[RMDB]
RNA sequence: GGGAACGACUCGAGUAGAGUCGAAAAGUACCAGGUAGUCACAUCUUCGUGUUCAUGGUACCAUGAAAGGGUAUACAACUGACCACUCUUGGGAUAUUCACUACCCCAAAAGGAUGGGUAACCAUUCAUAAAUGCCUCAGUUCGCUGAGGCAUUUAUAAAAGAAACAACAACAACAAC
Reactivity to 2A3 in 0.01 (KOAc 150mM, MgCl2 10mM, bicine 150mM(pH8.5), 24C), signal-to-noise 1, nucleotides 027 to 126: g020u010a030c000c020a000g010g020u040a030g050u050c030a020c010a090u050c050u220u190c090g040u030g030u080u040c000a000u040g030g000u040a050c030c010a070u230g090a140a120a050g100g000g020u060a030u030a060c070a070a020c020u060g010a050c000c020a010c020u070c040u060u060g050g000g000a030u020a040u080u130c010a020c050u080a050c000c020c000c000a060a090a040a000g070g010a030u040g000g000g010u000a010a090c020c010a020u000u030c050
Reactivity to DMS in 0.01 (KOAc 150mM, MgCl2 10mM, bicine 150mM(pH8.5), 24C), signal-to-noise 3, nucleotides 027 to 126: g010u000a090c000c020a120g020g010u000a060g000u000c090a050c130a070u000c110u000u000c160g010u000g010u000u000c020a100u010g010g000u000a020c020c050a040u010g010a070a120a140g020g000g000u000a030u000a060c100a040a100c150u000g000a070c030c020a080c020u010c140u000u000g010g020g010a040u010a030u020u010c150a070c220u020a050c050c000c040c080a030a060a100a090g010g010a020u000g000g010g010u000a090a140c010c020a050u000u000c060